RNA sequence: GGGAACGACUCGAGUAGAGUCGAAAAAUUUAGGUAGUGCCUCGUGUCUCACCUUCGGGGGUAGAGCACUGUCAUGGUUGGGGGGUCUAUUGCUGAUUACCCCGCCAUAGCAAACUCCGAAUACCGAAGGAUGAAUUGAUUUCGAUCAAUUCAUCCUAAAAGAAACAACAACAACAAC
Reactivity to DMS in 0.01 (KOAc 150mM, MgCl2 10mM, bicine 150mM(pH8.5), 24C), signal-to-noise 3, nucleotides 027 to 126: a080u010u010u010a050g020g010u000a040g010u000g000c110c050u000c130g020u010g000u010c030u010c030a110c030c020u000u000c130g010g010g000g020g000u000a070g010a030g020c030a050c070u000g000u000c040a020u000g010g010u000u010g070g010g000g000g000g000u000c010u000a090u010u010g030c280u000g000a040u000u000a130c010c000c010c000g010c000c000a010u000a040g020c030a040a100a140c040u000c030c020g010a080a070u000a150c040c010g000a130
Reactivity to 2A3 in 0.01 (KOAc 150mM, MgCl2 10mM, bicine 150mM(pH8.5), 24C), signal-to-noise 3, nucleotides 027 to 126: a000u080u110u090a050g000g040u020a020g050u080g140c010c030u070c060g030u030g040u020c010u020c040a090c040c030u060u080c100g300g040g020g000g040u040a070g050a010g030c030a020c080u020g050u040c010a000u000g000g100u190u300g000g000g010g030g000g000u000c000u040a140u080u300g120c190u010g050a060u000u150a300c000c000c010c000g010c000c000a010u000a010g000c000a000a070a130c020u010c030c010g030a020a030u040a080c000c020g020a030
This 177-nucleotide RNA was probed chemically with DMS and 2A3. Reactivities are given for positions 27 through 126. The data come from the RNA Mapping Database (RMDB), library OK2TRN. For DMS, 3,592 sequencing reads were counted. The reactions ran in a buffer of 150 mM KOAc, 10 mM MgCl2 and 150 mM bicine (pH 8.5), at 24 C.